[RMDB]
RNA sequence: GGGAACGACUCGAGUAGAGUCGAAAACACAUCCCCAUAUAGCGGUUUCUUCAUACUUCAGGGCCUGCGCCUGAUGGUUACUCACAAUAAGUAACGUUCCGUCUUAAGGAAGACGGGAAGCAAAGGUUUUGUUGGUAUGAGAAACCUAACUGUAGUGCACACGGGAGUAGUUCGCUACUCCCGUGUGAAAAGAAACAACAACAACAAC
Reactivity to 2A3 in 0.01 (KOAc 150mM, MgCl2 10mM, bicine 150mM(pH8.5), 24C), signal-to-noise 2, nucleotides 027 to 156: c160a000c000a070u000c000c000c000c000a030u020a000u030a030g050c050g000g060u020u010u040c020u180u070c030a010u000a000c000u020u040c000a000g020g010g010c000c000u050g000c020g020c010c020u300g110a120u150g080g010u000u010a000c000u030c070a110c070a270a230u180a280a020g010u000a000a010c010g020u040u030c010c000g050u020c010u060u130a300a230g160g120a060a000g110a010c010g020g000g010a000a000g000c000a030a000a000g020g000u000u030u010u020g070u090u170g030g020u000a000u000g000a000g000a000a000a000c000c000u000a010a000c000u000g010u030a020g110u040g030
Chemical mapping of a 207-nucleotide RNA with 2A3. Source: RMDB library VIROID, as collected in RNAgym. The RNA was probed in 150 mM KOAc, 10 mM MgCl2 and 150 mM bicine (pH 8.5) at 24 C. Values cover nucleotides 27 to 156. Values are in units of 0.01, from 0 to 300, in steps of 10.